Description: Structure probing data (2A3) for a 177-nucleotide construct. The reactions ran in a buffer of 150 mM KOAc, 10 mM MgCl2 and 150 mM bicine (pH 8.5), at 24 C. 2A3 adducts were read by reverse transcription with SuperScript II with manganese.

RNA sequence: GGGAACGACUCGAGUAGAGUCGAAAAGAAAAGAUGCACAAGGAGCGCGUGCAAAAUUAGAGCCAGGACGAGCACGAGGAACACGACACGAACCGGAGUCCUGGCGCUUAUCCGGUUCAAAAGAAAAAUUAUGCCCACGUUUCGACGUGGGCAUAAUAAAAGAAACAACAACAACAAC
Reactivity to 2A3 in 0.01 (KOAc 150mM, MgCl2 10mM, bicine 150mM(pH8.5), 24C), signal-to-noise 1, nucleotides 027 to 126: g060a010a130a080a000g100a080u090g000c000a000c000a010a100g000g060a070g100c040g000c060g000u000g000c000a010a010a010a010u110u180a040g000a000g000c000c000a000g000g000a000c000g000a000g010c060a010c150g000a050g030g130a100a050c050a030c260g200a100c060a010c090g010a020a000c010c000g000g000a000g000u100c000c050u000g000g000c000g000c000u000u040a000u130c000c010g000g000u010u030c020a030a000a110a000g170a020a100a000a000